[RMDB]
The record gives the reactivity of an RNA of 177 nucleotides to DMS and 2A3. For DMS the reverse transcriptase was MarathonRT. For 2A3 the reverse transcriptase was SuperScript II with manganese. The data come from the RNA Mapping Database (RMDB), library OK2TRN. The 2A3 profile rests on 1,717 reads. Reactivities are given for positions 27 through 126.
RNA sequence: GGGAACGACUCGAGUAGAGUCGAAAACUGCCGCCCCUGCUCACGGACGAGAUGAUCGCGCAGUACACGUCGGCGCUCCUGGCGGGGACGAUCACCAGCGGGUGGACGUUUGGGGCUGGUGCGGCGCAAUAGCCGUCAGGUUCGCCUGACGGCUAUUAAAAGAAACAACAACAACAAC
Reactivity to DMS in 0.01 (KOAc 150mM, MgCl2 10mM, bicine 150mM(pH8.5), 24C), signal-to-noise 2, nucleotides 027 to 126: c050u000g010c030c010g020c020c030c000c040u000g020c010u010c020a140c080g020g000a020c070g020a130g010a210u010g020a040u010c010g010c030g030c000a050g000u000a080c180a130c080g000u000c000g010g020c070g010c050u000c120c110u000g020g050c010g020g000g010g020a040c030g000a100u010c060a030c010c040a060g000c020g020g000g040u000g020g000a130c070g000u000u000u000g010g010g010g010c010u010g000g010u000g010c030g000g000c030g000c140
Reactivity to 2A3 in 0.01 (KOAc 150mM, MgCl2 10mM, bicine 150mM(pH8.5), 24C), signal-to-noise 1, nucleotides 027 to 126: c030u060g040c010c000g000c020c030c020c020u000g000c040u010c020a300c100g100g000a020c010g010a000g030a180u180g030a070u050c020g020c010g010c080a000g000u000a040c120a000c100g030u050c050g140g060c050g000c000u070c030c050u090g060g010c040g020g120g060g010a010c030g010a060u060c050a010c020c040a000g070c020g030g040g000u040g010g040a040c020g000u020u010u070g010g010g000g000c010u030g000g000u010g000c040g000g020c010g010c020